[RMDB]
RNA sequence: GGGAACGACUCGAGUAGAGUCGAAAAGCAGCCUCGCAAGAGGUCUGGCGCGACAGUAAAGAAUGCCUGAUGCAAGUCAGUUCGCUGGCAACACUUUCGAAUUGCGGGGACGUCCUGAGAGCUCGGUUCUACCAACCAGCAGAGAAAUCUAGCCGGGGCUACUAGUCAUCUUCGGAUGACUAGUAGCAAAAGAAACAACAACAACAAC
Reactivity to 2A3 in 0.01 (KOAc 150mM, MgCl2 10mM, bicine 150mM(pH8.5), 24C), signal-to-noise 1, nucleotides 027 to 156: g000c020a020g000c020c000u010c000g000c050a000a040g000a050g000g030u020c020u010g080g000c030g020c020g050a110c100a020g130u190a020a200a020g090a090a090u180g000c050c030u120g080a090u100g040c110a130a000g010u070c040a020g000u070u120c070g030c050u030g040g020c020a120a000c100a040c010u180u150u150c050g080a240a220u080u010g030c040g000g040g000g000a010c000g040u070c000c000u040g010a040g000a010g040c060u050c150g030g000u000u000c010u060a120c000c010a050a000c020c050a000g010c000a000g060a000g040a050a220a000u000c010u030a040g070c090c000g040g000g040